[RMDB]
Chemical mapping of a 207-nucleotide RNA with DMS and 2A3. Conditions: 150 mM KOAc, 10 mM MgCl2 and 150 mM bicine (pH 8.5), 24 C. The DMS profile rests on 1,349 reads. DMS adducts were read by reverse transcription with MarathonRT. For 2A3, 992 sequencing reads were counted.
RNA sequence: GGGAACGACUCGAGUAGAGUCGAAAAUUAAUGAAGCAAAUCUCCAAACGCCAACGAUGAGCGUGUCGCAAUCGCCGCUUAAGGCUUUUGCCGAGGCUGCUUGAGCCUUGUUACCAAAGAAAAGCCGAAAACCCAAAUGUCUUCGGACAUUUGGGAAGUUAAUAGGAUGCUUCGGCAUCCUAUUAACAAAAGAAACAACAACAACAAC
Reactivity to DMS in 0.01 (KOAc 150mM, MgCl2 10mM, bicine 150mM(pH8.5), 24C), signal-to-noise 1, nucleotides 027 to 156: u000u010a110a060u000g020a110a040g000c020a060a060a090u010c060u010c040c000a090a130a050c020g020c010c040a090a090c130g020a170u000g010a110g080c020g020u000g000u000c080g020c100a180a100u000c030g000c010c010g010c030u000u020a140a190g000g000c010u000u000u000u000g000c000c030g000a110g070g000c010u000g000c120u000u000g000a110g060c040c060u040u000g020u000u000a240c120c060a050a010a110g000a130a040a090a060g030c050c080g000a060a050a120a160c010c020c000a000a000a040u010g010u000c000u000u010c300g060g000a000c000a000u010u030u010g000g000g010a000a010
Reactivity to 2A3 in 0.01 (KOAc 150mM, MgCl2 10mM, bicine 150mM(pH8.5), 24C), signal-to-noise 2, nucleotides 027 to 156: u160u100a000a090u110g080a040a020g010c060a100a090a140u110c100u030c030c070a130a170a050c010g010c020c010a120a050c120g210a160u130g030a030g040c010g000u050g050u110c060g020c010a000a020u010c030g010c000c000g030c080u120u170a120a050g000g000c000u010u030u010u030g010c000c020g000a000g020g000c050u090g000c010u070u050g030a000g000c020c010u030u000g050u120u070a060c020c040a020a000a000g040a020a080a040a030g040c050c050g050a070a060a010a010c000c000c000a000a000a010u000g000u000c000u030u010c110g090g000a000c000a000u000u000u000g000g000g000a000a000